Background: An RNA of 177 nucleotides, treated with DMS and 2A3 and read out base by base. The 2A3 profile rests on 1,425 reads. 2A3 is a SHAPE reagent: it acylates the 2'-hydroxyl of flexible nucleotides of all four kinds. For DMS, 2,042 sequencing reads were counted. For DMS the reverse transcriptase was MarathonRT. Reactivities are given for positions 27 through 126.

RNA sequence: GGGAACGACUCGAGUAGAGUCGAAAAGAUAUUAACGCGCGUGCUGUGUCUAACGCGAAUUACCCAGUUAUUUUCGACUUUACUGGAGUCGUUAUAGCGUGAUAUGACACAGUUAUCCGCGAACGAACUUUAUGCUGAACUUCGGUUCAGCAUAAAGAAAAGAAACAACAACAACAAC
Reactivity to DMS in 0.01 (KOAc 150mM, MgCl2 10mM, bicine 150mM(pH8.5), 24C), signal-to-noise 2, nucleotides 027 to 126: g010a200u000a050u010u000a080a060c210g030c010g020c010g000u000g000c020u010g000u000g010u000c000u000a050a020c010g010c000g000a050a040u000u000a080c090c050c100a150g010u000u000a050u000u000u000u000c010g010a030c000u000u000u000a010c010u000g000g000a030g020u000c000g010u000u000a030u000a100g000c010g000u020g010a020u000a060u000g000a020c030a030c020a040g010u000u010a030u000c010c010g020c000g000a100a120c120g000a060a110
Reactivity to 2A3 in 0.01 (KOAc 150mM, MgCl2 10mM, bicine 150mM(pH8.5), 24C), signal-to-noise 2, nucleotides 027 to 126: g030a010u210a110u280u130a070a070c040g010c000g030c010g080u000g020c040u000g010u000g030u070c020u060a110a010c000g000c020g040a000a080u110u080a060c010c030c080a030g080u090u070a070u060u030u000u030c020g000a010c020u000u030u010a020c010u030g180g000a000g030u000c000g000u030u010a020u020a010g000c010g050u090g020a030u020a020u090g010a020c000a000c000a050g000u030u030a010u000c000c010g020c020g010a060a000c030g000a030a000